An RNA of 207 nucleotides, treated with 2A3 and read out base by base. The RNA was probed in 150 mM KOAc, 10 mM MgCl2 and 150 mM bicine (pH 8.5) at 24 C. 2A3 adducts were read by reverse transcription with SuperScript II with manganese. It was measured as part of the RMDB library RNAMAK.
RNA sequence: GGGAACGACUCGAGUAGAGUCGAAAAACGACGCGUUUCGACGCGUCGUAAAGCGUACUACAGGCUCACUAAUAGAUGCCACAGCGUCCCAAAUAGGACGCUGGAGCUAAUCUAUGGUGAGGCCUGUAUCGCAAACUUCCGGUAUUCGUACCGGAAGCCUCCAUUAUUUGUUCGCAAAUAAUGGAGGAAAAGAAACAACAACAACAAC
Reactivity to 2A3 in 0.01 (KOAc 150mM, MgCl2 10mM, bicine 150mM(pH8.5), 24C), signal-to-noise 2, nucleotides 027 to 156: a000c000g000a000c000g060c010g000u010u060u190c210g080a040c000g010c020g020u030c000g010u000a000a000a000g000c000g030u050a040c030u000a000c060a020g030g010c000u000c010a000c000u030a130a300u000a040g020a000u040g000c010c030a080c000a040g000c000g020u020c030c010c010a300a300a150u300a090g000g000a000c000g000c000u000g000g020a050g000c000u160a140a010u020c010u000a000u010g000g000u010g020a020g030g000c000c000u000g000u000a000u050c000g000c000a110a060a030c010u010u000c000c000g010g000u020a040u060u120c250g020u030a010c000c000g000g010a000a000g000